Chemical mapping of a 177-nucleotide RNA with DMS. It was measured as part of the RMDB library OK2TRN.
[RMDB]
RNA sequence: GGGAACGACUCGAGUAGAGUCGAAAACAGUUGGCCCAUUGUCACCAAAUACCUUGGAUGCACACCCUUUCAUCUCCUUCCAAGCUGAUGUUAAAUAGUGAUUGUUGUGCAAGUAGGCCUGUGUCAGUCGACGGUCAUGAUUCGUCAUGACCGUCGAAAAAGAAACAACAACAACAAC
Reactivity to DMS in 0.01 (KOAc 150mM, MgCl2 10mM, bicine 150mM(pH8.5), 24C), signal-to-noise 1, nucleotides 027 to 126: c120a120g010u000u010g040g020c000c040c050a110u010u000g010u020c070a150c000c040a030a100a050u000a070c120c060u000u000g010g000a140u000g020c020a030c040a090c070c010c020u000u000u000c070a080u000c000u000c130c030u000u030c100c130a110a100g000c080u000g020a010u000g020u010u000a050a050a090u010a090g030u010g000a090u000u000g000u000u000g030u010g000c020a080a070g010u000a110g010g000c040c000u000g000u010g000u000c060a120g020